An RNA of 207 nucleotides, treated with DMS and 2A3 and read out base by base. The DMS profile rests on 2,737 reads. The reactions ran in a buffer of 150 mM KOAc, 10 mM MgCl2 and 150 mM bicine (pH 8.5), at 24 C. It was measured as part of the RMDB library OK3TST. Reactivities are given for positions 27 through 156.
RNA sequence: GGGAACGACUCGAGUAGAGUCGAAAACAAUUGAGGUAACAAUUUCAUUUUUCAGUAUUUCGUUCGUCCAACAUAAUUUGCCGCUUUGUCUUGAACAUAAUGGCGGUAGAGGAUCAAGAUGUUCUGGAGGUGGCGGGAUGGCGUCAAUCAUUACUACAUUGCGCAGUAUUUUCGAAUACUGCGCAAUAAAAGAAACAACAACAACAAC
Reactivity to DMS in 0.01 (KOAc 150mM, MgCl2 10mM, bicine 150mM(pH8.5), 24C), signal-to-noise 2, nucleotides 027 to 156: c040a090a110u000u010g000a150g030g000u000a040a100c040a080a090u000u000u030c040a140u000u010u000u010u000c100a140g040u000a030u000u000u000c050g020u000u000c010g000u000c010c020a080a140c100a100u020a090a150u010u000u000g020c020c020g010c010u010u000u010g040u010c030u000u020g010a070a090c070a090u010a040a080u000g040g030c060g010g030u000a020g010a090g000g010a150u010c080a080a090g010a080u000g010u000u000c040u000g000g010a120g020g020u000g010g000c060g000g040g020a030u000g000g030c050g020u000c110a020a140u000c010a090u040u010a110c050u000a050c100
Reactivity to 2A3 in 0.01 (KOAc 150mM, MgCl2 10mM, bicine 150mM(pH8.5), 24C), signal-to-noise 4, nucleotides 027 to 156: c030a030a040u050u110g090a050g040g080u120a060a020c060a080a120u060u210u150c090a120u070u050u070u130u100c040a040g000u040a110u030u050u040c030g020u060u090c000g030u000c030c010a040a040c020a100u180a170a120u070u090u180g010c000c010g060c050u050u050u080g050u090c050u050u070g030a080a000c010a040u120a140a110u150g030g000c000g000g000u010a040g000a030g020g000a070u030c030a040a020g010a100u030g020u070u000c020u050g050g020a050g020g030u030g010g000c050g010g000g000a020u030g020g000c020g030u010c010a000a050u070c020a040u040u110a030c010u020a030c020